Chemical mapping of a 207-nucleotide RNA with DMS and 2A3. For 2A3 the reverse transcriptase was SuperScript II with manganese. For DMS the reverse transcriptase was MarathonRT.
RNA sequence: GGGAACGACUCGAGUAGAGUCGAAAAUGAGUAUUACACUUUUAGCGGGCUUACCACAAACCCAACAGGUCCUGUAGGCUUAAGGAUGAGGGAUGAAUCUGGAAAUGUAUUCUAUGACUCUAGAAGAAAGGGAUUAAGAGUUCUUCAGGUCGUUACAUAGACCAUCUUAUUUCGAUAAGAUGGUCUAAAAAGAAACAACAACAACAAC
Reactivity to DMS in 0.01 (KOAc 150mM, MgCl2 10mM, bicine 150mM(pH8.5), 24C), signal-to-noise 3, nucleotides 027 to 156: u000g000a110g000u000a060u040u000a100c050a060c060u000u000u010u000a100g020c050g010g010g020c030u000u010a120c050c050a110c070a060a080a100c030c000c020a080a110c140a150g020g010u000c010c000u000g010u010a050g030g030c040u000u000a070a090g020g020a060u010g000a090g010g010g020a110u000g010a040a070u020c050u000g000g010a070a110a110u000g010u000a120u000u000c030u010a060u010g000a050c000u010c030u000a090g030a110a080g000a090a090a090g000g020g010a140u000u000a080a140g010a130g010u000u000c070u000u000c030a070g040g010u000c020g000u000u010a070c070a190
Reactivity to 2A3 in 0.01 (KOAc 150mM, MgCl2 10mM, bicine 150mM(pH8.5), 24C), signal-to-noise 3, nucleotides 027 to 156: u080g010a030g030u080a040u120u200a050c060a060c070u110u110u050u090a060g030c080g000g030g000c050u070u070a060c030c030a080c070a090a110a050c000c010c020a040a020c040a040g000g050u020c010c010u030g040u100a070g070g000c020u090u100a060a040g020g010a010u040g020a040g010g010g000a020u060g040a050a070u030c030u050g010g050a070a020a040u080g030u070a100u070u100c070u050a070u110g000a000c000u010c010u150a050g010a020a000g000a030a040a020g030g030g040a030u100u130a080a030g030a010g090u040u000c000u010u000c010a010g010g010u010c000g010u020u010a020c020a040
The RNA was probed in 150 mM KOAc, 10 mM MgCl2 and 150 mM bicine (pH 8.5) at 24 C.
Source: RMDB library OK3TST, as collected in RNAgym.
Values cover nucleotides 27 to 156.